[RMDB]
RNA sequence: GGGAACGACUCGAGUAGAGUCGAAAAGGUCGAAGUAGCUGUGCGUUUUGCAGCUCCAAGCGCUAUCAAGAAACGGCGUGGUAUUCAACUACGUGCGUCAAUGCGCAGUUUGAUAAGCGUCGAUGCUCGUUCGGGGGCAAUUCGUUGCCCCCGAACGAAAAGAAACAACAACAACAAC
Reactivity to 2A3 in 0.01 (KOAc 150mM, MgCl2 10mM, bicine 150mM(pH8.5), 24C), signal-to-noise 1, nucleotides 027 to 126: g130g100u200c130g060a060a020g100u000a000g050c020u000g000u080g000c000g040u100u030u090u130g000c000a000g000c040u000c000c030a170a060g090c000g000c040u070a030u120c000a040a000g100a060a010a000c000g000g000c010g000u000g000g010u160a160u140u290c110a110a000c000u040a000c000g000u050g180c010g050u030c050a100a150u190g000c000g000c120a000g050u040u070u160g000a000u000a060a080g000c000g000u000c090g010a040u010g160c110u040
An RNA of 177 nucleotides, treated with 2A3 and read out base by base. Conditions: 150 mM KOAc, 10 mM MgCl2 and 150 mM bicine (pH 8.5), 24 C. It was measured as part of the RMDB library RFM100.